[RMDB]
Source: RMDB library OK1LIB, as collected in RNAgym. Chemical mapping of a 177-nucleotide RNA with 2A3. The reactions ran in a buffer of 150 mM KOAc, 10 mM MgCl2 and 150 mM bicine (pH 8.5), at 24 C.
RNA sequence: GGGAACGACUCGAGUAGAGUCGAAAAUGUCUAGGUGUAGGACAUGGCAGCCGUGGAAUGCCUUUGGUGCUGUAGAGCCUAGCAAUAAACGACUUUUUUAUUCAGCAUCACUCCUGUACGUAUCAGGCCACGGGCAGGCUUUCGAGCCUGCCCGUGGAAAAGAAACAACAACAACAAC
Reactivity to 2A3 in 0.01 (KOAc 150mM, MgCl2 10mM, bicine 150mM(pH8.5), 24C), signal-to-noise 1, nucleotides 027 to 126: u140g050u000c000u150a000g080g000u020g000u000a120g020g090a090c050a030u120g080g000c090a000g110c000c000g080u000g060g000a030a000u050g000c000c000u120u300u070g070g000u190g000c000u050g030u150a000g040a000g150c000c000u030a000g000c000a030a000u050a150a070a000c050g110a120c060u040u050u050u050u050u050a040u120u220c150a150g110c130a250u000c000a000c000u000c000c000u000g000u000a000c070g040u050a120u050c030a020g010g000